An RNA of 177 nucleotides, treated with DMS and 2A3 and read out base by base. Values cover nucleotides 27 to 126. For DMS the reverse transcriptase was MarathonRT. High 2A3 reactivity points to a flexible backbone, as in loops and unpaired stretches. Source: RMDB libraries RFM100 and RFMREP, as collected in RNAgym. Conditions: 150 mM KOAc, 10 mM MgCl2 and 150 mM bicine (pH 8.5), 24 C.

RNA sequence: GGGAACGACUCGAGUAGAGUCGAAAACCCAAUACUGUAGUACUUCGGUAUCGCAGCCCUCCGCCGCGCCCCGCCCGAACGCUGCGGUGGUCGCCCACUCGUGCAGGUAACUCACGAUGCUGGAACUUUAGCUUAAGGGAUUCGUCCCUUAAGCUAAAAAAGAAACAACAACAACAAC
Reactivity to DMS in 0.01 (KOAc 150mM, MgCl2 10mM, bicine 150mM(pH8.5), 24C), signal-to-noise 2, nucleotides 027 to 126: c040c000c000a110a090u050a060c050u040g000u010a070g050u000a010c030u000u040c070g010g010u010a030u000c090g030c040a090g000c050c020c000u000c030c030g020c050c060g020c050g000c070c020c040c000g000c050c040c010g000a070a080c090g000c060u010g000c050g000g040u000g000g000u000c030g000c070c010c010a060c030u000c000g010u000g000c160a020g000g020u010a090a100c030u010c010a040c000g030a020u000g000c070u000g010g010a120a080c080u000
Reactivity to 2A3 in 0.01 (KOAc 150mM, MgCl2 10mM, bicine 150mM(pH8.5), 24C), signal-to-noise 3, nucleotides 027 to 126: c020c000c000a000a050u190a090c090u090g040u140a080g030u010a040c020u050u080c140g020g020u010a030u160c050g010c040a020g020c020c000c000u020c010c010g050c020c010g000c000g000c020c000c000c000g050c020c000c010g050a060a030c040g020c080u060g010c010g050g020u040g000g040u050c020g060c000c000c000a010c000u000c000g010u040g010c050a010g040g070u080a110a070c000u000c010a020c010g010a030u080g040c110u020g020g030a070a060c030u000